[RMDB]
RNA sequence: GGGAACGACUCGAGUAGAGUCGAAAAGGCUAGGUGGUAUUCCGGUGUGGGAUACUUGGUAAUAUGUAACGCUAAUUGUAUAAGAUUGUAGGACGGAAUUUACAGUCUUGGUUUUUAUAAACCUGAAAAAAGGAAUUACACUUCGGUGUAAUUCCAAGCCUAUUAUUCACUUCGGUGAAUAAUAGGCAAAAGAAACAACAACAACAAC
Reactivity to DMS in 0.01 (KOAc 150mM, MgCl2 10mM, bicine 150mM(pH8.5), 24C), signal-to-noise 1, nucleotides 027 to 156: g020g050c010u000a060g000g010u020g020g030u000a060u000u000c030c000g000g000u020g040u000g000g030g020a160u000a050c030u020u000g000g010u000a050a100u000a100u000g010u020a070a100c070g010c040u000a060a140u020u000g030u010a090u030a050a030g010a030u000u020g020u000a040g010g010a200c030g010g030a110a300u010u000u010a040c020a040g010u010c030u000u010g020g030u000u000u000u010u000a060u010a100a050a050c020c010u030g010a000a020a040a070a060a130g010g020a030a020u000u000a010c010a000c000u000u010c300g030g020u010g030u000a020a010u010u010c020c000a010a150
Reactivity to 2A3 in 0.01 (KOAc 150mM, MgCl2 10mM, bicine 150mM(pH8.5), 24C), signal-to-noise 3, nucleotides 027 to 156: g050g010c040u030a010g010g030u040g030g020u100a060u040u030c030c010g130g060u110g030u170g030g040g000a030u030a050c010u050u060g000g020u080a070a080u110a120u210g050u040a090a020c040g000c050u030a070a030u140u050g030u060a110u010a150a030g010a030u020u040g020u010a030g000g090a000c060g030g040a050a030u080u080u060a040c020a010g010u000c000u020u020g010g000u000u000u010u030u050a160u130a070a060a030c000c020u030g090a090a020a000a010a010a000g010g000a000a000u000u010a000c000a000c000u030u080c170g070g000u000g010u010a010a000u010u010c000c000a000a000
Source: RMDB library M2RFPK, as collected in RNAgym.
Chemical mapping of a 207-nucleotide RNA with DMS and 2A3.
The DMS profile rests on 2,941 reads.